[RMDB]
RNA sequence: GGGAACGACUCGAGUAGAGUCGAAAACCACAAUAGCAAUAUUCUUACCUAUCAUGUUUACAGAAGGUAUAGCUAAAAUAACUUUUGGGGCAUUAGGUAAAACACUAAUAGCUUCACUAGCAUUCUCAGCUACCACGUCGUUCGCGACGUGGUAGCUAAAAGAAACAACAACAACAAC
Reactivity to 2A3 in 0.01 (KOAc 150mM, MgCl2 10mM, bicine 150mM(pH8.5), 24C), signal-to-noise 2, nucleotides 027 to 126: c040c040a200c010a040a230u150a060g010c000a030a030u010a170u300u050c010u000u030a020c010c000u020a070u300c040a090u190g140u210u160u100a250c060a020g090a070a000g000g000u000a020u040a040g020c000u070a100a120a000a000u160a220a090c040u120u050u050u000g000g000g000g020c010a000u000u000a000g000g050u130a220a020a120a000c160a000c110u080a010a010u050a100g020c000u000u000c000a000c030u000a000g020c020a270u140u000c080u050c100
Structure probing data (2A3) for a 177-nucleotide construct. 2A3 is a SHAPE reagent: it acylates the 2'-hydroxyl of flexible nucleotides of all four kinds. 2A3 adducts were read by reverse transcription with SuperScript II with manganese. The RNA was probed in 150 mM KOAc, 10 mM MgCl2 and 150 mM bicine (pH 8.5) at 24 C. For 2A3, 580 sequencing reads were counted.